[RMDB]
RNA sequence: GGGAACGACUCGAGUAGAGUCGAAAAGGCAGACGUACACGACCAAGUCUGCCACAGUUGACGGGUUUUUACCUUUUGCUCUUUUGAGCGUCGACUGACGUACCUCGGUCGUGUAUAGGUACGGAAAGGGUUUCAGGUAGUUCGCUACCUGGGACCCAAAAGAAACAACAACAACAAC
Reactivity to 2A3 in 0.01 (KOAc 150mM, MgCl2 10mM, bicine 150mM(pH8.5), 24C), signal-to-noise 9, nucleotides 027 to 126: g010g000c010a000g000a010c020g050u040a010c030a010c020g010a000c000c000a030a000g000u000c000u000g010c000c000a000c000a000g000u000u010g010a010c020g020g050g020u020u050u040u160u300a080c020c010u110u170u250u190g010c000u020c020u060u280u150u300g010a000g000c010g000u000c000g000a010c000u010g010a020c070g040u100a090c000c010u040c050g010g000u000c000g000u000g000u010a010u020a000g030g010u100a030c070g040g010a080a070a090
Reactivity to DMS in 0.01 (KOAc 150mM, MgCl2 10mM, bicine 150mM(pH8.5), 24C), signal-to-noise 9, nucleotides 027 to 126: g010g020c000a000g010a030c210g010u010a040c040a020c020g010a020c010c010a110a220g000u000c010u000g010c010c010a100c010a000g000u000u000g010a010c010g010g000g010u000u030u030u030u060a020c010c010u000u030u040u030g010c000u000c000u000u020u020u030g010a010g010c000g010u000c000g010a010c000u000g000a100c130g010u010a150c010c010u010c180g010g020u000c010g020u000g000u020a040u030a060g000g010u010a030c040g000g010a100a080a070
Notes:
The record gives the reactivity of an RNA of 177 nucleotides to 2A3 and DMS. The data come from the RNA Mapping Database (RMDB), library OK1LIB. 2A3 adducts were read by reverse transcription with SuperScript II with manganese. The 2A3 profile rests on 39,741 reads.